[RMDB]
RNA sequence: GGGAACGACUCGAGUAGAGUCGAAAACAAUCAACAAUAUGGUUUGUGUAGUUAUGCUGAAAAUCGUUGAGGUUGUAUGGAAUAGGUUAACCGUAAGACCUUAAGUUGAAAAAGUUUAAAAUUAAUCAAAAUCAUGUACACUUCGGUGUACAUGAAACCCUAGUAGUGUCUUCGGACACUACUAGGGAAAAGAAACAACAACAACAAC
Reactivity to 2A3 in 0.01 (KOAc 150mM, MgCl2 10mM, bicine 150mM(pH8.5), 24C), signal-to-noise 3, nucleotides 027 to 156: c030a000a050u060c040a020a040c040a040a110u140a110u190g060g000u050u070u030g050u010g030u020a090g030u090u130a040u120g060c020u040g050a050a050a040a100u070c040g030u040u040g010a020g020g060u010u050g050u040a080u100g020g090a040a140u040a070g060g050u100u160a100a030c030c010g010u020a090a040g000a030c010c010u000u070a040a030g010u030u010g040a030a000a030a000a060g040u110u110u170a060a130a100a150u130u210a050a060u090c040a150a040a040a080u000c000a000u020g000u000a000c000a000c000u020u040c090g050g000u000g000u000a000c000a000u000g000a000a000a000
Reactivity to DMS in 0.01 (KOAc 150mM, MgCl2 10mM, bicine 150mM(pH8.5), 24C), signal-to-noise 1, nucleotides 027 to 156: c050a070a170u000c030a000a110c050a180a220u000a200u000g020g070u000u010u010g010u010g000u000a030g060u000u000a030u000g030c000u000g000a040a080a030a080u020c040g000u000u000g010a110g010g000u010u020g020u000a140u000g010g000a040a110u020a050g040g010u000u000a110a170c010c050g010u000a180a170g010a000c000c000u030u010a070a130g030u000u000g000a030a020a170a100a140g020u000u000u000a070a050a030a060u000u000a060a120u000c050a060a070a070a130u000c000a010u000g020u000a010c000a000c000u000u000c290g000g000u020g020u030a030c000a000u000g000a000a000a030
Notes
This 207-nucleotide RNA was probed chemically with 2A3 and DMS. Reactivities are given for positions 27 through 156. For 2A3, 1,266 sequencing reads were counted.